[RMDB]
RNA sequence: GGGAACGACUCGAGUAGAGUCGAAAACUUCGGCGUCAACGAUGAAGCAGGCCGCCAUAACGCUCUUAUCGACGAGCUGGCCACUGUGGUCAUCAAAAAAAUAGCUGAGUGCCGCUCCGUUGACCAAACCCUACUACCAGUUCGCUGGUAGUAGGGUAAAAGAAACAACAACAACAAC
Reactivity to 2A3 in 0.01 (KOAc 150mM, MgCl2 10mM, bicine 150mM(pH8.5), 24C), signal-to-noise 6, nucleotides 027 to 126: c040u190u130c050g090g000c100g020u020c010a040a000c020g090a120u160g050a040a020g000c110a110g020g020c030c020g040c000c000a120u130a140a060c100g020c010u010c020u070u240a200u260c090g070a090c020g010a050g000c010u010g030g000c010c040a080c170u200g050u150g090g060u020c010a080u060c090a040a010a020a000a000a000a100u220a030g010c090u060g050a020g110u160g010c000c000g010c010u030c000c010g000u000u000g020a010c020c000a030a060
Reactivity to DMS in 0.01 (KOAc 150mM, MgCl2 10mM, bicine 150mM(pH8.5), 24C), signal-to-noise 2, nucleotides 027 to 126: c080u010u040c110g010g080c180g000u050c050a030a050c070g000a090u030g040a060a220g020c010a060g050g050c220c060g000c030c060a060u040a150a090c260g000c020u000c000u020u050a130u030c210g000a160c100g000a060g030c020u020g000g050c000c070a110c130u000g000u020g050g000u000c000a080u000c070a000a000a010a030a050a090a070u020a030g000c150u000g000a040g010u040g020c050c010g010c000u000c000c090g020u000u000g010a070c000c110a050a070
This 177-nucleotide RNA was probed chemically with 2A3 and DMS.
Values cover nucleotides 27 to 126.
For 2A3 the reverse transcriptase was SuperScript II with manganese.
Conditions: 150 mM KOAc, 10 mM MgCl2 and 150 mM bicine (pH 8.5), 24 C.
Source: RMDB library OK1LIB, as collected in RNAgym.
As a SHAPE reagent, 2A3 marks flexible, mostly unpaired nucleotides at the ribose 2'-OH.